[RMDB]
RNA sequence: GGGAACGACUCGAGUAGAGUCGAAAAGAGGACUUGUGAUGUCGCAAAUCAUGUACAACUACCCCGCGAUGUUGGGUCACGCCGGGGAUAUGGCCGGAUAUGCCGGCACGCUGCAGAGCUUGGGUGCUCCUCUUAGGAGCUUCGGCUCCUAAGAGGAAAAAGAAACAACAACAACAAC
Reactivity to DMS in 0.01 (KOAc 150mM, MgCl2 10mM, bicine 150mM(pH8.5), 24C), signal-to-noise 3, nucleotides 027 to 126: g000a140g010g010a060c080u000u000g030u000g010a060u000g000u000c080g020c110a060a080a080u000c080a070u010g020u010a080c110a070a130c140u010a110c040c000c000c040g020c060g000a070u000g020u000u000g000g000g000u000c070a070c050g010c080c040g020g000g000g020a090u000a040u000g010g030c020c020g000g000a220u010a070u010g020c010c010g010g000c030a020c080g000c030u010g000c060a060g010a100g010c050u000u000g020g000g000u010g000c110
Reactivity to 2A3 in 0.01 (KOAc 150mM, MgCl2 10mM, bicine 150mM(pH8.5), 24C), signal-to-noise 2, nucleotides 027 to 126: g060a030g010g050a040c020u070u040g020u040g060a090u040g020u050c010g000c060a010a070a060u070c060a080u100g050u150a060c030a130a060c030u110a060c000c010c010c030g030c030g040a090u060g050u110u180g070g020g060u080c000a000c030g050c040c030g030g000g010g020a020u030a040u080g090g000c000c020g050g020a060u080a060u290g180c020c020g010g010c000a000c000g030c000u050g000c020a040g010a000g080c050u070u070g050g040g040u050g050c030